This 177-nucleotide RNA was probed chemically with 2A3 and DMS.
[RMDB]
RNA sequence: GGGAACGACUCGAGUAGAGUCGAAAAUUGAGAUUAGGGAGUGGUGAUGACUCUUAACGAGCAUGCUGCCUUCAAGUAUCUGUGAUGUGAGGAGCGCCUCUGCCCGGCCGCGACCCCGUCUGGGAGGUCUUUUCCAUACUUUCGAGUAUGGAAAAGAAAAAGAAACAACAACAACAAC
Reactivity to 2A3 in 0.01 (KOAc 150mM, MgCl2 10mM, bicine 150mM(pH8.5), 24C), signal-to-noise 2, nucleotides 027 to 126: u060u080g030a060g020a000u030u150a100g030g030g000a060g030u070g110g050u120g140a090u070g120a180c010u010c000u040u030a120a020c110g010a000g000c010a010u070g000c020u020g050c010c010u020u020c040a080a020g050u030a050u050c080u080g160u150g160a150u080g080u060g070a050g000g000a050g070c050g080c050c000u020c010u040g030c020c020c030g000g030c040c020g010c020g030a060c000c000c000c010g040u000c060u090g020g030g000a030g050g100
Reactivity to DMS in 0.01 (KOAc 150mM, MgCl2 10mM, bicine 150mM(pH8.5), 24C), signal-to-noise 5, nucleotides 027 to 126: u010u000g000a070g010a080u000u000a110g000g010g000a080g020u000g020g020u000g000a060u000g010a130c010u000c020u000u010a110a100c230g010a050g020c020a040u000g010c030u000g000c060c030u000u000c050a060a100g010u000a040u000c050u000g010u010g010a060u000g010u000g010a090g010g000a150g000c190g010c050c030u010c040u000g010c010c010c030g010g000c040c010g020c080g000a120c040c030c010c050g020u000c050u000g000g000g000a060g000g000
Source: RMDB library OK2TRN, as collected in RNAgym. For DMS the reverse transcriptase was MarathonRT. Values cover nucleotides 27 to 126. For DMS, 6,682 sequencing reads were counted.